[RMDB]
RNA sequence: GGGAACGACUCGAGUAGAGUCGAAAAAUAACAGCUAUCAUCCAUUUUUAUAGCAAUAUUUGAAAAUGGCUGCUCGUCCACAACAACCUCCUAUGGAAAUGCCGGAUCUGUCGAACGCCAUUGUGGCAUCAACGUACAAUUUCGAUUGUACGUUGAUAAAAGAAACAACAACAACAAC
Reactivity to DMS in 0.01 (KOAc 150mM, MgCl2 10mM, bicine 150mM(pH8.5), 24C), signal-to-noise 6, nucleotides 027 to 126: a080u010a080a080c120a100g020c040u000a050u010c100a080u000c050c030a060u000u000u000u000u010a050u000a090g000c090a100a100u000a050u000u000u010g000a020a030a060a040u000g000g010c110u000g000c060u000c070g000u000c020c010a050c070a040a050c070a060a090c070c030u000c040c030u000a050u000g010g010a050a060a070u000g020c060c050g000g000a070u000c030u000g000u000c060g010a050a100c150g010c010c030a130u000u010g010u010g020g020c100
Reactivity to 2A3 in 0.01 (KOAc 150mM, MgCl2 10mM, bicine 150mM(pH8.5), 24C), signal-to-noise 4, nucleotides 027 to 126: a000u120a030a020c020a020g000c010u030a030u090c010a030u000c020c030a030u110u030u050u010u070a110u060a030g010c000a080a190u080a100u160u120u140g070a060a070a060a020u040g030g030c020u040g000c030u040c040g080u010c020c010a080c020a110a050c010a020a080c030c040u060c010c020u040a060u090g020g040a100a110a010u090g040c030c030g030g000a040u000c020u030g050u050c030g010a060a030c050g000c030c010a040u060u180g080u070g050g000c000
Conditions: 150 mM KOAc, 10 mM MgCl2 and 150 mM bicine (pH 8.5), 24 C. Structure probing data (DMS and 2A3) for a 177-nucleotide construct. It was measured as part of the RMDB library OK2TRN.